[RMDB]
RNA sequence: GGGAACGACUCGAGUAGAGUCGAAAACGCUGGGAUCGCCUCGAUGAAAACUUAAUAGUUCACUACCCACCUCCUGAAGCGCGCACGGGAGAGGUGAACUAUUAAGUUGGAGAGGACCGAUCCUGUGCUGAAGCGCGCACGGCAACCGAAAGGUGCGGUGUACAGUGGACUUCGGUCCACUGUACACAAAAGAAACAACAACAACAAC
Reactivity to 2A3 in 0.01 (KOAc 150mM, MgCl2 10mM, bicine 150mM(pH8.5), 24C), signal-to-noise 2, nucleotides 027 to 156: c040g000c000u050g010g000g020a010u000c070g250c270c010u020c040g300a300u010g000a010a000a010a000c000u000u000a010a010u000a010g000u000u010c000a000c000u130a170c030c130c070a080c030c000u010c000c020u010g010a220a070g010c000g000c010g000c000a020c020g020g000g000a010g000a000g000g000u030g010a000a000c000u000a010u000u000a000a010g010u000u000g000g000a000g000a000g000g050a020c040c010g000a000u010c000c000u010g010u010g000c020u050g020a090a020g020c010g020c020g000c030a010c020g070g000c040a040a070c020c010g050a080a020a030g020g010u030g010c030g030